[RMDB]
RNA sequence: GGGAACGACUCGAGUAGAGUCGAAAACUGUCUGCAACGGGCGGGGAAGAAGGUUAUCCAGCUGAACAGAAAGUCCUAUGAGACAGAGUACCCCAAGUGUAAGAACGAUGAUUGGGAUUUUGUCAUCUCUUAUAAUUCCCUUCGGGGAAUUAUAAGAAAAAGAAACAACAACAACAAC
Reactivity to DMS in 0.01 (KOAc 150mM, MgCl2 10mM, bicine 150mM(pH8.5), 24C), signal-to-noise 3, nucleotides 027 to 126: c020u000g010u000c000u000g000c070a070a100c230g020g030g020c040g000g010g000g010a130a080g000a080a110g010g010u010u000a070u000c110c120a030g020c050u010g020a140a180c100a080g000a040a070a060g030u000c000c010u000a240u000g000a080g020a040c010a050g010a100g010u000a160c080c000c010c100a080a100g010u010g010u010a070a090g010a070a080c080g010a050u000g000a060u000u000g000g000g000a130u000u000u010u010g000u000c030a030u000c030
Reactivity to 2A3 in 0.01 (KOAc 150mM, MgCl2 10mM, bicine 150mM(pH8.5), 24C), signal-to-noise 2, nucleotides 027 to 126: c000u000g020u040c030u180g150c070a070a030c060g010g000g000c050g000g040g040g000a030a040g030a020a020g050g000u070u130a050u220c010c020a030g080c040u030g040a090a010c020a030g070a080a060a010g000u010c000c000u050a120u260g050a060g000a010c000a020g000a000g020u070a110c000c020c000c000a050a070g020u070g060u210a150a100g080a150a050c060g010a060u070g030a040u070u100g110g060g040a060u060u140u080u100g030u000c010a060u020c010